[RMDB]
RNA sequence: GGGAACGACUCGAGUAGAGUCGAAAAACAAUUUAUGGCUGGUGAUAAUUCAUAGCAAGCCUGAAUUAUUCAUUGUUUGGCAUAGCAUCACAUUUGCAACACAUUCAGUAAACAAAUCAUCAAUCGACAUUUAGCUAGGGUUCGCCCUAGCUAAAUGAAAAGAAACAACAACAACAAC
Reactivity to 2A3 in 0.01 (KOAc 150mM, MgCl2 10mM, bicine 150mM(pH8.5), 24C), signal-to-noise 1, nucleotides 027 to 126: a000c010a030a000u030u120u080a160u120g050g040c030u030g030g080u010g060a030u040a290a170u070u030c050a030u040a110g060c030a040a000g050c000c030u020g030a020a040u000u090a060u130u140c060a060u000u160g060u080u040u050g000g000c000a030u020a030g000c010a010u070c000a020c000a070u000u020u050g050c090a080a030c020a020c000a030u050u140c020a000g090u110a070a070a030c060a050a100a030u040c030a020u060c030a070a020u110c000g120a030
Reactivity to DMS in 0.01 (KOAc 150mM, MgCl2 10mM, bicine 150mM(pH8.5), 24C), signal-to-noise 3, nucleotides 027 to 126: a110c080a030a040u000u010u000a030u010g010g030c010u000g010g030u010g000a040u000a060a100u010u020c040a060u000a120g020c050a100a030g010c060c040u000g010a020a010u000u020a080u020u000c100a070u000u010g010u010u000u010g030g010c030a010u010a050g010c030a050u010c050a050c050a050u000u000u010g000c070a040a030c090a030c070a050u010u010c060a060g010u000a080a070a110c100a050a050a050u010c060a080u000c090a060a060u010c120g010a220